[RMDB]
RNA sequence: GGGAACGACUCGAGUAGAGUCGAAAAAUUCGCCGAGAAGCCUCUGUUCGAAAUCAUCGGGAGUGAUCCAGAUGAAGGUCCUGCCAUGAGACCGCAACGAGAGCAUGUCGCAUCGAAUGGACUCGGGUAUACUAGGUGACGUUCGCGUCACCUAGAAACGAGUCUAAAGAUUCGUCUUUAGACUCGUAAAAGAAACAACAACAACAAC
Reactivity to DMS in 0.01 (KOAc 150mM, MgCl2 10mM, bicine 150mM(pH8.5), 24C), signal-to-noise 3, nucleotides 027 to 156: a130u010u000c020g000c020c000g000a070g020a090a120g020c040c030u000c020u020g030u010u000c030g010a080a100a170u000c010a010u000c020g030g030g000a080g000u020g000a230u000c000c000a080g010a070u000g020a080a080g010g030u000c010c010u000g000c050c150a120u000g010a060g000a060c030c030g020c080a050a070c070g000a090g010a120g020c070a080u020g020u000c020g000c030a230u000c030g000a050a200u010g010g000a080c000u000c010g020g010g030u020a110u000a130c000u000a000g010g040u000g000a030c000g030u000u000c300g010c030g040u000c000a000c000c000u000a000g000a020a110
Reactivity to 2A3 in 0.01 (KOAc 150mM, MgCl2 10mM, bicine 150mM(pH8.5), 24C), signal-to-noise 5, nucleotides 027 to 156: a000u070u030c040g020c010c000g010a010g030a070a040g030c020c020u050c150u130g030u030u030c020g020a080a120a100u020c010a010u020c070g020g010g010a030g020u210g030a060u020c030c030a080g060a200u130g100a160a060g000g000u000c010c010u050g140c030c010a060u040g010a020g010a080c010c050g010c050a030a030c030g030a010g000a010g090c010a050u160g040u040c040g010c070a080u030c030g030a030a030u050g010g000a020c000u000c010g030g010g040u070a070u020a150c000u000a000g000g000u010g000a010c010g020u040u050c220g030c000g050u010c000a000c010c000u000a000g000a000a010
Conditions: 150 mM KOAc, 10 mM MgCl2 and 150 mM bicine (pH 8.5), 24 C. The record gives the reactivity of an RNA of 207 nucleotides to DMS and 2A3. Reactivities are rounded to 0.1 and cut off at 0 and 3. The 2A3 profile rests on 4,041 reads. For DMS, 6,546 sequencing reads were counted.